RNA sequence: GGGAACGACUCGAGUAGAGUCGAAAAGUAUUAUCGAUCAUGAUUUUCUUCAUCGAACGAUGAUAUCUGAGUAUUCUAUGUUUGAAUUACCACCUGUAGGAGACCUAACCAUCGACUUGUCGAAGAGCACCGAUGUGAGAUUCGUCUCACAUCGGUGAAAAGAAACAACAACAACAAC
Reactivity to 2A3 in 0.01 (KOAc 150mM, MgCl2 10mM, bicine 150mM(pH8.5), 24C), signal-to-noise 7, nucleotides 027 to 126: g010u000a000u010u000a000u000c010g010a010u010c000a010u010g070a080u040u110u190u110c090u090u000c010a010u020c120g000a000a010c010g010a000u010g010a010u000a020u060c080u060g050a040g080u040a100u070u020c050u020a110u170g190u030u110u120g130a130a060u110u060a070c010c020a050c030c040u040g030u100a030g000g090a050g010a050c020c020u060a070a060c030c020a040u050c030g060a050c060u050u080g060u050c020g050a080a020g010a030g120
Reactivity to DMS in 0.01 (KOAc 150mM, MgCl2 10mM, bicine 150mM(pH8.5), 24C), signal-to-noise 2, nucleotides 027 to 126: g000u010a000u000u000a000u020c000g050a070u010c000a000u020g000a000u000u040u060u100c230u030u000c010a000u010c140g050a000a100c000g000a020u000g010a000u000a040u000c040u000g010a140g030u020a070u010u000c010u020a080u000g000u000u030u010g010a060a040u020u010a080c050c050a010c050c070u010g010u000a050g010g020a090g000a120c030c070u020a040a130c070c070a050u020c010g000a040c070u060u000g010u000c100g010a030a130g010a110g010